[RMDB]
RNA sequence: GGGAACGACUCGAGUAGAGUCGAAAAGAUAUGGAUCUGGGUCGAGAACUGACAUCGGAAACGAUGUCUGUUCGAAGACAGCCCAGAGUCCUAAGUCAAAACAGAUGGAUCUUCGGAUCCAUCUGAAUCAUGUAAAGCAGUUCGCUGCUUUACAUGAAAAAGAAACAACAACAACAAC
Reactivity to DMS in 0.01 (KOAc 150mM, MgCl2 10mM, bicine 150mM(pH8.5), 24C), signal-to-noise 7, nucleotides 027 to 126: g000a010u000a030u010g000g000a230u000c000u000g000g010g000u000c030g000a030g010a020a010c000u000g010a010c000a000u000c000g010g000a010a010a040c000g010a020u010g000u000c000u000g010u010u000c010g010a060a120g010a040c300a110g000c000c010c000a010g000a030g010u000c000c000u000a000a090g000u010c010a090a080a120a210c010a000g000a000u000g000g010a000u000c000u000u020c230g020g000a010u000c000c000a000u000c000u000g000a040a080
Reactivity to 2A3 in 0.01 (KOAc 150mM, MgCl2 10mM, bicine 150mM(pH8.5), 24C), signal-to-noise 3, nucleotides 027 to 126: g000a000u020a010u050g010g000a010u000c000u010g010g000g040u090c050g050a010g000a130a010c010u020g010a000c000a010u010c000g010g010a020a010a020c000g000a000u010g000u010c000u000g010u000u000c000g000a000a010g050a000c010a000g000c000c000c000a010g010a010g110u070c000c000u010a000a010g030u010c020a010a000a130a190c010a010g000a010u010g000g010a000u020c020u070u160c300g060g000a000u000c010c000a000u000c000u000g000a000a020
Notes
This 177-nucleotide RNA was probed chemically with DMS and 2A3. For DMS, 9,920 sequencing reads were counted. As a SHAPE reagent, 2A3 marks flexible, mostly unpaired nucleotides at the ribose 2'-OH. It was measured as part of the RMDB library TTRDEL.